[RMDB]
RNA sequence: GGGAACGACUCGAGUAGAGUCGAAAAGGUAAACAACUUGCCGAGGAUGAAACCCUGCCACUGUGGUCUUCCUCGGCUUGUCUGAGCGAGACCUAGACCGUGACGGUGCACGCCUACGAGAAUCGGAGGAUGAGGGAGGGGCUGCGAGGUGGCGGCAGUAAUAUAGCCGGUUCGCCGGCUAUAUUACAAAAGAAACAACAACAACAAC
Reactivity to 2A3 in 0.01 (KOAc 150mM, MgCl2 10mM, bicine 150mM(pH8.5), 24C), signal-to-noise 1, nucleotides 027 to 156: g080g000u080a050a070a140c010a020a020c020u040u040g000c000c000g000a010g010g000a000u040g040a190a060a160c030c000c020u030g210c160c010a080c070u090g040u210g100g010u000c030u040u010c090c000u000c000g020g040c020u000u000g000u000c020u110g060a040g070c000g030a030g030a120c000c050u040a030g080a050c010c020g060u070g060a070c010g020g090u040g020c100a000c120g020c030c010u080a060c060g050a020g140a230a130u180c090g060g000a060g070g020a080u080g040a090g000g020g010a050g060g000g020g040c030u050g020c010g060a020g050g050u060g020g000c000g000g000c010a010